[RMDB]
RNA sequence: GGGAACGACUCGAGUAGAGUCGAAAAUAUCGAUCGUUAUGCUAAUAAUAACUCCUGUUAGCAACGUGCGCAGAUACACACAGACAUGAGAUUCAGGGAACAACAGAGCCACACGUCAGAAACUUCCGAGUUAUUAAGUCUUCGGACUUAAUAACUCAAAAGAAACAACAACAACAAC
Reactivity to DMS in 0.01 (KOAc 150mM, MgCl2 10mM, bicine 150mM(pH8.5), 24C), signal-to-noise 2, nucleotides 027 to 126: u000a070u000c100g010a140u000c050g010u010u000a080u000g010c020u000a030a030u010a070a120u000a130a110c100u000c090c070u000g000u000u000a030g010c010a040a040c060g010u000g020c100g030c070a040g020a050u000a040c060a030c100a060c070a040g010a070c040a070u030g000a080g010a070u000u000c070a020g000g000g000a120a070c060a020a040c070a060g000a100g000c040c030a020c040a050c100g000u010c090a030g000a140a090a110c110u010u000c070c080
Reactivity to 2A3 in 0.01 (KOAc 150mM, MgCl2 10mM, bicine 150mM(pH8.5), 24C), signal-to-noise 2, nucleotides 027 to 126: u120a020u060c020g020a030u060c010g030u060u080a090u130g000c000u000a020a030u090a150a070u050a170a110c040u060c030c050u030g000u020u010a000g010c020a030a030c070g020u040g000c030g000c030a020g030a050u070a040c040a000c010a000c000a020g060a040c010a060u140g040a070g010a080u110u040c030a030g070g000g020a040a010c010a010a000c010a030g060a010g070c020c030a000c000a010c020g080u070c010a030g090a120a080a100c010u040u000c020c060